[RMDB]
RNA sequence: GGGAACGACUCGAGUAGAGUCGAAAAAAAAAGGCACUUCAGGUGGCUCUGGGGCGAAAGUACUGACGACAGACCAGAAGCGGGAAGCCGUUGAGUUUAUGUGUCAUGCGACCGGUCUGUCGAAAAACCCUUAUGUCUGAUUCGUCAGACAUAAGGGAAAAGAAACAACAACAACAAC
Reactivity to DMS in 0.01 (KOAc 150mM, MgCl2 10mM, bicine 150mM(pH8.5), 24C), signal-to-noise 2, nucleotides 027 to 126: a020a040a080a110a100g000g010c020a060c060u000u000c060a040g020g000u000g000g010c070u000c010u000g000g010g000g000c170g000a010a070a070g000u020a080c110u000g000a110c010g000a000c000a010g000a030c010c000a110g010a070a210g000c030g000g010g020a110a150g000c010c020g000u000u020g000a130g000u010u000u010a070u040g000u010g010u000c050a090u020g000c060g020a210c030c030g040g010u010c000u010g000u000c000g010a010a030a020a090a040
Reactivity to 2A3 in 0.01 (KOAc 150mM, MgCl2 10mM, bicine 150mM(pH8.5), 24C), signal-to-noise 1, nucleotides 027 to 126: a070a000a000a000a000g030g000c040a030c050u090u030c040a070g060g010u040g040g000c010u000c050u160g010g020g000g040c020g000a040a000a000g050u050a040c070u060g060a020c000g000a000c000a000g000a020c000c000a010g000a100a010g000c040g000g050g020a050a020g100c010c030g030u020u140g100a160g090u090u140u020a130u130g150u000g090u080c050a080u170g070c060g000a000c000c000g020g030u000c010u010g000u000c000g030a010a010a000a000a000